RNA sequence: GGGAACGACUCGAGUAGAGUCGAAAAUGGACGACGCGCGACGUGCCCCGUUACGCCCCGCCGCCGCCGGCGACGGAAGCAGCAGAGGCCACACCAGCUGCCCAAACGCUGAAGGAGAAAGCCUCAGGACUAAUAUAAUGUUCGCAUUAUAUUAGUCAAAAGAAACAACAACAACAAC
Reactivity to DMS in 0.01 (KOAc 150mM, MgCl2 10mM, bicine 150mM(pH8.5), 24C), signal-to-noise 8, nucleotides 027 to 126: u030g000g010a080c040g010a060c040g020c030g000c040g000a060c050g010u010g010c020c000c010c030g010u010u010a100c110g010c030c050c030c020g000c020c030g020c020c050g010c130c070g010g020c040g010a030c060g000g010a120a120g010c040a060g000c050a070g010a090g010g010c020c040a080c130a120c070c020a070g000c020u020g000c020c010c020a080a110a110c140g010c010u010g000a100a070g010g000a100g000a100a080a130g000c000c010u000c030a090g000
Reactivity to 2A3 in 0.01 (KOAc 150mM, MgCl2 10mM, bicine 150mM(pH8.5), 24C), signal-to-noise 3, nucleotides 027 to 126: u140g050g030a020c030g010a020c030g040c000g010c020g040a060c030g040u060g030c010c000c010c000g040u060u050a050c060g020c000c000c000c010g010c010c000g020c010c010g100c040c100g020g010c010g000a010c020g020g030a090a020g010c030a000g000c010a010g050a060g070g010c030c010a040c000a010c010c020a010g020c010u060g010c000c020c000a060a090a010c040g000c030u040g030a100a050g060g040a090g070a040a080a010g060c000c010u020c010a010g090
Annotation
This 177-nucleotide RNA was probed chemically with DMS and 2A3. The reactions ran in a buffer of 150 mM KOAc, 10 mM MgCl2 and 150 mM bicine (pH 8.5), at 24 C. 2A3 adducts were read by reverse transcription with SuperScript II with manganese. Reactivities are given for positions 27 through 126. It was measured as part of the RMDB library OK1LIB.